[RMDB]
RNA sequence: GGGAACGACUCGAGUAGAGUCGAAAAGGGAUUUCCCCUCAUAGUACAACUGGAAGGAUAGUGCUUGUAAAGAGUAGAGAUGUGUACAUGAUGAAUCAUUGAGGGAGGGUGGAUAUUUUUAUUCCUAGAUAUGGAGGAAACAUAAGUCUGUAGUAUAUCGUGGUAAUAUCUUCGGAUAUUACCACGAAAAAGAAACAACAACAACAAC
Reactivity to 2A3 in 0.01 (KOAc 150mM, MgCl2 10mM, bicine 150mM(pH8.5), 24C), signal-to-noise 4, nucleotides 027 to 156: g050g020g040a070u080u050u100c000c010c000c000u020c010a150u080a060g050u070a050c030a110a050c120u050g070g060a060a050g050g000a080u100a070g070u030g040c030u050u050g080u160a160a110a000g070a030g030u110a010g010a010g000a080u070g010u040g020u090a030c030a070u070g010a040u050g040a090a080u090c050a080u080u160g030a060g010g060g010a030g010g020g010u030g000g000a010u020a070u100u140u010u020u030a070u050u030c000c000u010a020g000a060u070a050u130g030g010a010g020g020a020a050a000c050a030u100a080a000g040u040c030u090g040u070a040g120u020a060u000a000
Reactivity to DMS in 0.01 (KOAc 150mM, MgCl2 10mM, bicine 150mM(pH8.5), 24C), signal-to-noise 2, nucleotides 027 to 156: g000g010g020a240u000u000u000c050c000c000c030u010c010a100u010a100g020u000a050c060a040a090c050u020g010g010a090a110g010g020a110u010a140g020u000g030c040u000u000g020u000a130a070a140g020a090g020u000a060g040a090g000a070u010g020u010g000u000a070c040a060u000g010a130u000g000a080a090u010c060a120u010u010g010a160g010g010g020a080g000g020g050u010g010g000a080u000a000u040u000u000u000u020a100u040u010c040c010u000a130g020a110u010a040u000g030g030a050g000g010a040a030a090c100a070u010a040a100g030u000c040u020g010u000a110g020u010a110u000a130

The record gives the reactivity of an RNA of 207 nucleotides to 2A3 and DMS. DMS adducts were read by reverse transcription with MarathonRT. It was measured as part of the RMDB library OK3TST. Reactivities are given for positions 27 through 156. For 2A3, 2,461 sequencing reads were counted. For DMS, 4,198 sequencing reads were counted. The reactions ran in a buffer of 150 mM KOAc, 10 mM MgCl2 and 150 mM bicine (pH 8.5), at 24 C.